[RMDB]
RNA sequence: GGGAACGACUCGAGUAGAGUCGAAAAACUUUUAGCGAUUAUCGUUAUAGAAAUGUCCUUGGCAUAUCGCUAUGCACAGAGGUAUUAGUAGCGCAAUAGCUAUUGAAGGACAUUAGCUCUCAAAUAAGUCUAUUUAACGUUUCGACGUUAAAUAGACAAAAGAAACAACAACAACAAC
Reactivity to DMS in 0.01 (KOAc 150mM, MgCl2 10mM, bicine 150mM(pH8.5), 24C), signal-to-noise 4, nucleotides 027 to 126: a100c070u010u000u000u000a010g000c010g000a250u000u000a080u000c040g020u000u000a060u010a090g010a080a040a010u000g010u000c000c010u000u000g010g010c080a030u000a040u000c050g000c070u000a030u000g010c140a090c110a120g000a090g010g020u010a060u000u010a120g010u000a020g010c020g030c260a060a070u000a080g010c000u000a040u010u000g000a050a020g000g000a030c020a010u000u000a070g000c150u010c040u000c050a050a050a080u010a030a130
Reactivity to 2A3 in 0.01 (KOAc 150mM, MgCl2 10mM, bicine 150mM(pH8.5), 24C), signal-to-noise 5, nucleotides 027 to 126: a000c030u150u110u010u100a000g010c010g030a040u160u080a070u300c010g010u020u030a030u010a090g090a010a060a010u010g000u000c000c000u020u040g060g000c010a040u030a030u300c040g000c020u010a010u030g060c080a040c030a100g240a070g040g190u160a100u110u130a100g070u020a010g000c010g010c030a070a090u030a030g000c000u030a050u100u180g080a030a010g000g000a000c000a000u000u000a000g000c000u000c010u010c040a050a090a060u160a150a030